[RMDB]
RNA sequence: GGGAACGACUCGAGUAGAGUCGAAAAGAUUUGGGAUGGUUACAUACCUUGCACAAGCUCACAUAGGUGGAAAGCAGUAGAAGAGGGGCCUGUGCCCCUUCUUCAGGCUGUGCUUGUCUUUCCUGACCUCAUAAUUGUUCUCUUGGACUUUUGGGAAUGCUGGGUAAUAUUUCGAUAUUACCCAGCAAAAAGAAACAACAACAACAAC
Reactivity to DMS in 0.01 (KOAc 150mM, MgCl2 10mM, bicine 150mM(pH8.5), 24C), signal-to-noise 2, nucleotides 027 to 156: g000a100u000u010u020g000g010g010a100u020g000g010u020u000a080c090a120u010a050c040c000u020u010g020c040a100c060a030a100g010c070u000c050a080c020a120u000a050g030g030u000g010g010a100a090a130g040c030a030g040u000a220g010a030a050g000a070g030g040g000g070c000c050u000g020u000g060c110c000c000c010u010u000c000u000u010c000a130g020g000c020u010g020u020g020c050u000u010g010u000c030u000u000u010c000c000u010g010a160c030c030u010c040a050u000a040a100u000u010g020u010u020c030u000c040u020u000g020g000a140c100u010u000u000u000g000g040g000a140a130
Reactivity to 2A3 in 0.01 (KOAc 150mM, MgCl2 10mM, bicine 150mM(pH8.5), 24C), signal-to-noise 2, nucleotides 027 to 156: g020a010u200u070u040g020g000g010a030u040g020g090u110u060a070c030a030u180a080c060c080u040u070g060c030a020c000a040a070g030c020u060c000a050c010a100u260a180g290g000u040g010g010a050a010a040g010c000a010g020u080a020g030a010a000g020a010g000g000g020g040c000c180u300g180u300g000c050c000c000c000u080u130c000u000u000c000a010g120g010c010u000g000u000g000c000u000u020g020u030c000u020u020u010c000c010u010g070a070c000c010u030c040a050u130a190a050u100u030g050u100u040c030u000c020u070u060g120g010a070c040u080u130u250u260g090g040g030a040a160